Source: RMDB library OK2TRN, as collected in RNAgym. This 177-nucleotide RNA was probed chemically with DMS. The RNA was probed in 150 mM KOAc, 10 mM MgCl2 and 150 mM bicine (pH 8.5) at 24 C. For DMS the reverse transcriptase was MarathonRT.
[RMDB]
RNA sequence: GGGAACGACUCGAGUAGAGUCGAAAAGCCGCGGCGCCGCGCCUGCGCGCCACCGUCGCGCACCGACCGGGGAGCGCCCAGCCGACCGUUGCCGCGCGCGCCCUGGCCACUCUCGACGGCCUGUCCAAUUUACGUGCUGGUUCGCCAGCACGUAAAUAAAAGAAACAACAACAACAAC
Reactivity to DMS in 0.01 (KOAc 150mM, MgCl2 10mM, bicine 150mM(pH8.5), 24C), signal-to-noise 1, nucleotides 027 to 126: g040c050c030g050c020g040g030c030g040c070c110g000c040g000c180c020u000g030c300g020c000g030c000c000a110c090c090g030u000c040g010c200g000c180a090c160c040g010a010c020c000g020g020g010g010a110g000c020g020c010c030c030a030g010c050c020g020a130c170c110g040u000u000g060c040c020g040c140g010c140g000c010g000c060c020c000u010g030g000c010c010a090c080u000c050u030c090g010a100c130g010g030c050c050u000g010u000c030c030a120